[RMDB]
RNA sequence: GGGAACGACUCGAGUAGAGUCGAAAACUUCUAUCGUAACCGCUUAGGGUUCCUCUCUGGCGAGAACGUCAUUAUGUCCCGGUCGGCUGGCUACUUUGCGUUCUUCCCUAAAAGCGUGGCGACCCUCGGAAGCUUUCCUGUUCGCAGGAAAGCUUCCAAAAGAAACAACAACAACAAC
Reactivity to 2A3 in 0.01 (KOAc 150mM, MgCl2 10mM, bicine 150mM(pH8.5), 24C), signal-to-noise 2, nucleotides 027 to 126: c030u130u010c090u090a210u120c030g120u080a010a220c060c040g030c040u070u130a050g030g050g000u070u100c010c010u030c000u030c060u080g000g010c020g000a060g020a080a050c020g030u030c070a080u020u260a050u170g120u110c030c000c000g010g060u050c030g040g050c010u000g020g000c000u010a030c060u040u050u090g020c000g060u060u000c000u000u130c000c010c000u030a100a080a040a000g060c020g000u020g000g000c000g030a070c000c020c020u010c020
The record gives the reactivity of an RNA of 177 nucleotides to 2A3.
The data come from the RNA Mapping Database (RMDB), library OK1LIB.
Conditions: 150 mM KOAc, 10 mM MgCl2 and 150 mM bicine (pH 8.5), 24 C.
The 2A3 profile rests on 944 reads.